[RMDB]
RNA sequence: GGGAACGACUCGAGUAGAGUCGAAAAUCAGAAGCAUAAGCAACAAAAGUGAAAAAAUAGACAAAUGGGACUAUAUGAAACUUAUGUGCCUCAAAGGACAUAAUAGGGUGAAAAGUCAACCCAUGGACGUACCAUGAACAUUCGUGUUCAUGGUACGAAAAGAAACAACAACAACAAC
Reactivity to 2A3 in 0.01 (KOAc 150mM, MgCl2 10mM, bicine 150mM(pH8.5), 24C), signal-to-noise 2, nucleotides 027 to 126: u090c020a000g050a090a000g010c010a020u090a100a050g010c020a000a040c030a050a130a030a030g060u100g170a210a050a030a000a060a090u070a080g080a040c030a020a170a040u040g030g080g020a030c050u030a040u010a030u240g090a090a000a000c000u020u000a010u020g030u060g120c010c000u100c030a140a190a000g030g010a000c000a010u140a100a050u070a160g000g030g030u050g000a060a060a020a020g030u030c020a000a060c030c000c000a010u040g050g000a000
Reactivity to DMS in 0.01 (KOAc 150mM, MgCl2 10mM, bicine 150mM(pH8.5), 24C), signal-to-noise 2, nucleotides 027 to 126: u030c070a080g000a060a110g030c050a040u000a110a060g010c050a010a080c050a040a070a150a070g020u000g000a020a050a080a060a040a070u000a080g010a050c050a060a100a040u000g000g010g000a120c000u000a030u010a050u000g000a080a130a020c060u000u010a000u000g000u010g030c040c010u000c210a090a160a100g000g000a050c050a000u000a100a050u000a060g020g020g010u000g000a040a060a050a060g010u000c060a030a130c050c000c000a030u010g020g010a220
The record gives the reactivity of an RNA of 177 nucleotides to 2A3 and DMS. It was measured as part of the RMDB library OK2TST.